[RMDB]
RNA sequence: GGGAACGACUCGAGUAGAGUCGAAAAGAUAUGGAAGCAUGCCAUCAACAGCCACACCAGUCGGAAACGACUGUUGUGGACAUGAUGACAUGCUUCCUAAGUCAAAAGUGUUGGUUCGCCAACACAACGUUUACUGUCACUUCGGUGACAGUAAACGAAAAGAAACAACAACAACAAC
Reactivity to 2A3 in 0.01 (KOAc 150mM, MgCl2 10mM, bicine 150mM(pH8.5), 24C), signal-to-noise 2, nucleotides 027 to 126: g030a030u040a020u130g000g000a000a030g000c000a000u010g040c030c020a010u000c010a030a240c070a150g090c000c000a030c010a020c000c020a010g000u000c000g000g000a070a010a030c010g000a000c010u030g000u020u000g000u030g010g010a000c020a070u260g020a010u000g000a000c010a000u000g000c000u000u000c000c000u000a000a000g000u010c000a020a030a040a220g020u010g020u000u040g080g070u090u150c300g090c090c000a000a000c010a000c000a040a020
Reactivity to DMS in 0.01 (KOAc 150mM, MgCl2 10mM, bicine 150mM(pH8.5), 24C), signal-to-noise 2, nucleotides 027 to 126: g000a040u000a300u000g010g000a000a000g020c000a020u000g000c020c000a000u000c000a050a120c300a300g000c000c030a010c010a020c030c000a000g040u000c000g000g000a090a040a160c000g040a040c000u000g000u000u030g020u000g000g000a000c170a130u010g000a000u000g020a000c000a000u000g040c000u010u000c000c000u020a020a070g000u000c020a130a060a120a200g000u000g030u000u000g000g010u000u030c270g040c000c000a000a000c000a000c020a120a080